[RMDB]
The record gives the reactivity of an RNA of 177 nucleotides to DMS and 2A3. Values cover nucleotides 27 to 126. 2A3 adducts were read by reverse transcription with SuperScript II with manganese. Source: RMDB library M2PK50, as collected in RNAgym. For DMS, 1,662 sequencing reads were counted. The reactions ran in a buffer of 150 mM KOAc, 10 mM MgCl2 and 150 mM bicine (pH 8.5), at 24 C.
RNA sequence: GGGAACGACUCGAGUAGAGUCGAAAAUACGCGAGGUUCGCCUCGCGUAAAAGAGGAGCGUAAACGUGAGCGUACGUAGUGCUGUACAUGGUUCCUACACGAAUGCACAUGGUUUCGACCAUGUGAAGAGAGGUUUCGUAUUCGUACGAAACCUCUCAAAAGAAACAACAACAACAAC
Reactivity to DMS in 0.01 (KOAc 150mM, MgCl2 10mM, bicine 150mM(pH8.5), 24C), signal-to-noise 2, nucleotides 027 to 126: u000a000c000g010c010g010a020g040g010u000u030c210g000c000c000u000c000g010c020g020u000a000a020a090a130g010a150g000g010a100g010c020g000u010a050a060a110c060g030u000g000a170g040c200g030u010a030c060g010u010a140g020u030g000c020u000g000u010a080c170a080u000g040g020u000u000c000c020u000a100c230a070c110g020a080a110u000g000c000a010c000a000u000g000g000u000u000u020c230g010a010c000c000a010u000g000u000g020a000a060
Reactivity to 2A3 in 0.01 (KOAc 150mM, MgCl2 10mM, bicine 150mM(pH8.5), 24C), signal-to-noise 3, nucleotides 027 to 126: u030a010c000g000c000g000a000g030g030u030u070c130g060c030c000u000c000g000c000g020u000a000a000a000a000g140a020g060g080a020g000c020g070u140a090a100a050c060g020u020g100a060g110c080g070u060a010c050g050u040a030g060u050g030c000u030g040u090a030c020a090u110g100g010u020u030c010c000u040a050c090a000c080g190a150a080u220g010c010a000c000a020u000g000g040u050u070u060c120g050a020c010c000a000u010g000u010g000a040a010